Conditions: 150 mM KOAc, 10 mM MgCl2 and 150 mM bicine (pH 8.5), 24 C. An RNA of 177 nucleotides, treated with DMS and 2A3 and read out base by base. DMS adducts were read by reverse transcription with MarathonRT. For DMS, 91,318 sequencing reads were counted.
RNA sequence: GGGAACGACUCGAGUAGAGUCGAAAACAUCUCUUCGUCUAGUGAGCGAUUCGUGCUGCGUUGGGCUCAUUAUUAUUCGCUUUACGGACGAGCGAGUAACAUCACGGCACGAGGGGAAUCAGGUGGCUCUCGGAGUAGGUUUCGACCUGCUCUGGGGAAAAGAAACAACAACAACAAC
Reactivity to DMS in 0.01 (KOAc 150mM, MgCl2 10mM, bicine 150mM(pH8.5), 24C), signal-to-noise 9, nucleotides 027 to 126: c120a100u010c010u000c010u010u010c030g010u010c030u010a080g020u010g000a040g010c020g000a120u020u010c070g020u000g010c030u010g010c070g010u010u010g010g010g010c040u010c050a060u020u030a100u010u010a020u010u000c000g010c000u000u000u020a110c070g000g000a040c070g000a010g000c050g000a010g000u000a030a060c110a070u010c100a080c060g000g000c040a030c020g000a060g010g000g000g010a080a080u020c090a050g000g010u010g000g000c080
Reactivity to 2A3 in 0.01 (KOAc 150mM, MgCl2 10mM, bicine 150mM(pH8.5), 24C), signal-to-noise 9, nucleotides 027 to 126: c020a050u010c000u000c000u040u020c010g020u000c010u020a040g010u010g020a020g010c010g030a030u030u030c020g000u020g020c020u020g010c010g060u050u040g030g040g000c010u010c050a020u010u100a030u040u010a010u000u020c000g000c000u010u010u070a050c030g030g030a010c020g000a010g000c020g000a000g000u010a020a020c010a050u050c020a000c000g010g000c020a000c010g010a010g000g010g000g020a020a050u050c010a010g020g020u020g020g000c000